Chemical mapping of a 207-nucleotide RNA with 2A3. The RNA was probed in 150 mM KOAc, 10 mM MgCl2 and 150 mM bicine (pH 8.5) at 24 C. The 2A3 profile rests on 684 reads.
RNA sequence: GGGAACGACUCGAGUAGAGUCGAAAAGGGGUCGCUCUUGUCAGACGGGAGGUAUAAAUUGGAACUACUCCUGAAGCCUCCACGGGAGCCAAUUUGCGAACCGUCUUGGAUUUAGAGCGACGGAGGCACCCAAAAGCGGAUCCUUCGGGAUCCGCAACAGAUUACGAACGUUCGCGUUCGUAAUCUGAAAAGAAACAACAACAACAAC
Reactivity to 2A3 in 0.01 (KOAc 150mM, MgCl2 10mM, bicine 150mM(pH8.5), 24C), signal-to-noise 1, nucleotides 027 to 156: g040g010g030g010u010c010g030c010u030c030u000u040g030u090c090a060g010a030c010g000g010g000a210g160g120u280a230u180a300a060a020u040u010g000g030a110a080c020u110a040c000u300c000c010u010g010a050a010g000c020c020u000c020c000a020c010g060g000g000a020g020c000c000a030a010u100u080u070g130c020g000a040a040c000c000g030u030c040u090u140g120g000a050u210u160u230a020g000a000g010c000g000a000c000g000g000a000g000g000c020a030c000c000c010a020a180a000a000g000c010g020g000a000u010c040c010u070u130c130g130g010g000a000u020c000c000g000c000a000a000